Chemical mapping of a 177-nucleotide RNA with DMS and 2A3. Values are in units of 0.01, from 0 to 300, in steps of 10. The RNA was probed in 150 mM KOAc, 10 mM MgCl2 and 150 mM bicine (pH 8.5) at 24 C. 2A3 adducts were read by reverse transcription with SuperScript II with manganese.
RNA sequence: GGGAACGACUCGAGUAGAGUCGAAAAUACGGGACGGCCAAGAGCGGCGUCGGCGUGGCGUCUAUGGGAGUCAUGCGCCCGGAGCUCGUCAUGAAGUCCAUCGUGCCCGUCGUCAUGGCUGGUGUGCCAUGCUUAUGAAUUUCGAUUCAUAAGCAUGAAAAGAAACAACAACAACAAC
Reactivity to DMS in 0.01 (KOAc 150mM, MgCl2 10mM, bicine 150mM(pH8.5), 24C), signal-to-noise 9, nucleotides 027 to 126: u010a080c080g010g010g010a090c050g010g010c030c040a080a120g010a090g010c050g010g010c070g020u000c030g010g000c030g020u010g010g010c020g010u000c040u000a050u000g010g000g000a050g010u000c040a030u000g000c090g000c080c030c060g000g000a100g010c070u000c030g010u010c020a020u000g000a040a050g010u000c010c020a040u000c120g010u000g000c010c010c010g010u000c030g010u000c040a090u000g010g010c010u000g000g010u010g010u000g010c090
Reactivity to 2A3 in 0.01 (KOAc 150mM, MgCl2 10mM, bicine 150mM(pH8.5), 24C), signal-to-noise 9, nucleotides 027 to 126: u190a020c050g020g020g080a020c030g030g020c010c010a080a030g090a030g100c060g050g000c040g020u030c020g000g020c030g080u160g020g000c020g050u010c020u040a050u050g020g000g010a050g040u040c020a020u050g010c020g010c020c050c010g030g000a050g010c070u060c060g090u090c020a010u040g020a030a010g060u000c020c010a030u040c020g010u030g010c000c010c000g000u020c010g020u020c020a060u080g060g000c030u050g050g080u150g040u100g080c010